[RMDB]
RNA sequence: GGGAACGACUCGAGUAGAGUCGAAAAAAACACGUCCUCGUCGUACAGAGUGGUAACAUGUGUCACCACAUAUCCAAGCUUGGGUACACGGGCUUGACCCAACCCCUUGGGCGGAUGGUGGCACAUGAAAAGAAGUAACACUUCGGUGUUACUUCAACGUUUGAUCUAACUUCGGUUAGAUCAAACGAAAAGAAACAACAACAACAAC
Reactivity to 2A3 in 0.01 (KOAc 150mM, MgCl2 10mM, bicine 150mM(pH8.5), 24C), signal-to-noise 3, nucleotides 027 to 156: a000a000a000c100a030c040g090u060c000c000u040c030g110u040c030g010u110a080c050a110g070a040g040u100g040g060u120a100a030c000a000u000g000u000g000u000c000a000c030c000a030c050a140u260a040u080c000c010a000a000g070c020u020u010g000g000g020u040a020c030a030c040g000g010g000c040u300u300g160a300c000c010c000a000a030c000c000c000c000u010u000g000g000g000c010g000g010a030u030g000g000u000g000g020c000a000c000a000u000g000a000a010a010a000g000a000a000g010u000a000a000c000a000c020u040u070c230g090g000u000g000u000u000a000c000u000u000c010a000a010
Reactivity to DMS in 0.01 (KOAc 150mM, MgCl2 10mM, bicine 150mM(pH8.5), 24C), signal-to-noise 2, nucleotides 027 to 156: a050a000a100c070a110c090g010u000c010c000u010c070g010u020c060g030u010a090c090a100g000a200g000u010g020g000u000a110a180c000a060u000g030u000g000u020c000a030c010c030a050c050a100u020a020u010c020c010a020a140g000c050u010u020g020g000g060u000a080c190a060c100g000g000g010c010u010u020g000a090c000c000c000a040a040c000c020c010c020u000u010g010g020g030c130g030g020a100u000g000g030u000g020g000c000a030c010a000u000g000a040a070a090a120g010a050a010g000u020a020a010c000a010c000u000u000c240g070g090u000g000u000u000a000c000u010u000c000a020a060